[RMDB]
Overview: The record gives the reactivity of an RNA of 207 nucleotides to DMS and 2A3. DMS adducts were read by reverse transcription with MarathonRT. For 2A3 the reverse transcriptase was SuperScript II with manganese. The data come from the RNA Mapping Database (RMDB), library OK3TST. The reactions ran in a buffer of 150 mM KOAc, 10 mM MgCl2 and 150 mM bicine (pH 8.5), at 24 C.
RNA sequence: GGGAACGACUCGAGUAGAGUCGAAAAGCUAUGGUUCUCUCUACCACGGGCGAGGGUGUAUGGAACUGAAGUGAUGCACUAGGACCUGACCACUUGUCACAUCUUGCGAGAAGGCGGGGUGAGACCGUCUAGCCAAUUCAUGGCGAGGGGGCGAGGGGACAAUUCAACAGUUCGCUGUUGAAUUGUCAAAAGAAACAACAACAACAAC
Reactivity to DMS in 0.01 (KOAc 150mM, MgCl2 10mM, bicine 150mM(pH8.5), 24C), signal-to-noise 1, nucleotides 027 to 156: g010c070u030a070u000g020g000u010u000c020u000c050u000c040u000a090c040c050a090c080g020g060g040c070g020a130g050g080g050u020g010u000a060u000g010g010a050a210c110u000g000a100a040g010u030g030a060u000g000c060a090c050u010a140g020g010a140c100c020u010g000a000c060c050a070c000u000u000g020u000c030a060c060a110u000c040u010u000g000c040g020a140g000a080a020g000g030c030g000g000g050g020u050g020a060g020a020c000c060g000u020c040u000a120g010c040c000a020a080u000u000c130a140u010g030g000c010g000a070g020g000g020g020g020c040g040a150g000g020g010
Reactivity to 2A3 in 0.01 (KOAc 150mM, MgCl2 10mM, bicine 150mM(pH8.5), 24C), signal-to-noise 3, nucleotides 027 to 156: g050c030u110a060u180g050g040u070u000c020u000c020u020c050u080a100c040c040a040c090g000g020g000c020g020a060g060g030g010u050g030u020a090u100g050g010a040a020c020u030g040a130a010g070u030g060a150u100g050c040a010c020u040a030g050g000a020c000c000u050g030a080c010c040a080c070u040u100g020u030c030a020c000a160u050c080u050u120g030c080g020a090g010a150a000g130g000c050g000g020g000g000u110g030a030g000a010c010c000g040u010c040u010a010g030c020c020a050a080u150u180c050a130u210g000g010c000g010a040g000g000g010g010g000c060g010a030g000g000g020

For 2A3, 1,833 sequencing reads were counted.